[RMDB]
RNA sequence: GGGAACGACUCGAGUAGAGUCGAAAAAACACUGUGUAGGAUAGGUGGGAGGCUUUGAAGUGUGGACGCCAGUCUGCAUGGAGCCGACCUUGAAAUACCACCCUUUAAUGAAGAAUAACAAAGCCAAUCGUCAAAUACGAUUCGUCGUAUUUGACGAAAAAGAAACAACAACAACAAC
Reactivity to DMS in 0.01 (KOAc 150mM, MgCl2 10mM, bicine 150mM(pH8.5), 24C), signal-to-noise 3, nucleotides 027 to 126: a060a060c070a050c080u000g020u000g010u000a030g000g000a090u000a020g000g000u000g010g000g000a200g010g020c000u000u000u020g010a110a110g010u010g020u000g000g020a010c010g000c110c160a080g010u000c000u000g000c010a020u000g000g000a010g010c000c000g010a080c300c030u000u010g000a060a070a090u010a090c020c020a030c010c000c020u000u010u010a060a100u010g000a080a070g000a080a090u010a070a090c170a040a070a090g010c090c070a090a100
Reactivity to 2A3 in 0.01 (KOAc 150mM, MgCl2 10mM, bicine 150mM(pH8.5), 24C), signal-to-noise 2, nucleotides 027 to 126: a000a000c080a010c030u060g000u020g040u060a010g060g080a020u000a010g040g010u010g010g000g020a150g000g010c000u300u190u040g050a040a010g010u010g010u010g020g000a010c000g030c050c000a000g000u040c000u000g010c000a020u000g020g010a000g000c000c000g000a010c010c000u020u000g020a040a000a000u050a000c010c010a000c000c000c000u060u020u130a160a090u130g070a040a110g040a110a080u210a110a040c040a090a060a020g100c060c020a040a090